The record gives the reactivity of an RNA of 207 nucleotides to DMS and 2A3. Conditions: 150 mM KOAc, 10 mM MgCl2 and 150 mM bicine (pH 8.5), 24 C.
[RMDB]
RNA sequence: GGGAACGACUCGAGUAGAGUCGAAAAAGCACUGGUACGAUACGUCGUACCAGUGCAGUCGUUGGGAUGGCACGCAAUUAAAUACAUGUGUGACGUGUAUUUGCGAACGACGUAAUUAUUUUUCAAAAUCACGCUAUCGUGUUCGCACGAUAGCGAACUCUAAAGGCUUGUUCGCAAGCCUUUAGAGAAAAGAAACAACAACAACAAC
Reactivity to DMS in 0.01 (KOAc 150mM, MgCl2 10mM, bicine 150mM(pH8.5), 24C), signal-to-noise 1, nucleotides 027 to 156: a140g030c000a000c000u000g000g040u000a010c010g000a060u000a060c300g080u000c020g020u000a000c010c000a000g030u000g000c000a000g020u000c020g020u000u000g010g000g010a090u010g010g040c000a240c020g000c030a130a190u010u000a080a000a040u000a000c010a050u010g040u020g040u000g030a030c060g000u020g000u010a030u000u000u010g040c030g000a030a100c020g050a060c040g030u000a050a090u000u000a130u010u020u020u000u000c050a070a030a190a150u010c080a120c020g040c000u000a000u020c020g020u010g000u010u020c300g000c000a040c000g010a010u000a000g000c010g000a000a030
Reactivity to 2A3 in 0.01 (KOAc 150mM, MgCl2 10mM, bicine 150mM(pH8.5), 24C), signal-to-noise 4, nucleotides 027 to 156: a000g010c000a000c000u000g020g000u000a010c020g000a010u020a030c200g130u020c000g000u000a000c010c000a020g000u010g000c000a000g000u000c000g010u020u060g130g020g040a150u090g100g020c050a010c020g010c040a000a070u160u120a200a060a040u130a010c070a100u130g090u050g070u100g220a110c040g000u010g010u010a060u010u040u090g090c000g000a010a000c010g000a010c020g050u030a080a040u090u150a140u070u170u040u060u110c120a060a050a050a150u130c050a030c060g000c010u000a020u000c010g010u000g020u070u000c120g050c080a010c000g010a000u000a000g000c000g000a000a000
The 2A3 profile rests on 1,930 reads. The DMS profile rests on 3,059 reads. It was measured as part of the RMDB library M2RFPK. For DMS the reverse transcriptase was MarathonRT.